[RMDB]
RNA sequence: GGGAACGACUCGAGUAGAGUCGAAAAAUUUAUGUGCAAGUUGGGCAAAGUGUCUUAUUUUUUAAGUAUUUCAAAGUAAAAUUACAUGUUAAUACGUAGUAUUAAUGGCGAGACUCCUGAGGGAGCAAUAAAGCCUAGUGUUCGCACUAGGCUUUAUAAAAGAAACAACAACAACAAC
Reactivity to 2A3 in 0.01 (KOAc 150mM, MgCl2 10mM, bicine 150mM(pH8.5), 24C), signal-to-noise 1, nucleotides 027 to 126: a000u110u220u160a140u100g030u000g000c000a040a040g080u030u010g020g000g030c000a170a000a000g230u140g030u000c000u000u180a220u120u210u000u020u170u170a040a030g000u020a120u080u280u000c030a000a150a060g000u120a210a170a000a000u050u080a070c010a130u030g030u060u060a000a000u000a000c000g070u040a000g000u000a230u000u000a000a060u070g000g000c000g000a020g010a020c000u000c010c000u030g000a000g250g000g000a000g000c010a050
Reactivity to DMS in 0.01 (KOAc 150mM, MgCl2 10mM, bicine 150mM(pH8.5), 24C), signal-to-noise 2, nucleotides 027 to 126: a060u020u030u020a020u010g000u020g010c070a060a050g010u000u000g010g000g000c060a080a040a100g020u010g000u000c020u020u000a010u000u020u030u040u030u020a050a100g000u020a040u000u020u010c010a030a080a170g010u010a030a040a040a090u050u010a100c090a080u030g010u040u000a010a000u010a010c030g020u020a100g010u010a020u010u000a000a030u000g040g000c060g030a100g020a090c000u000c000c000u020g000a090g060g000g010a020g010c040a090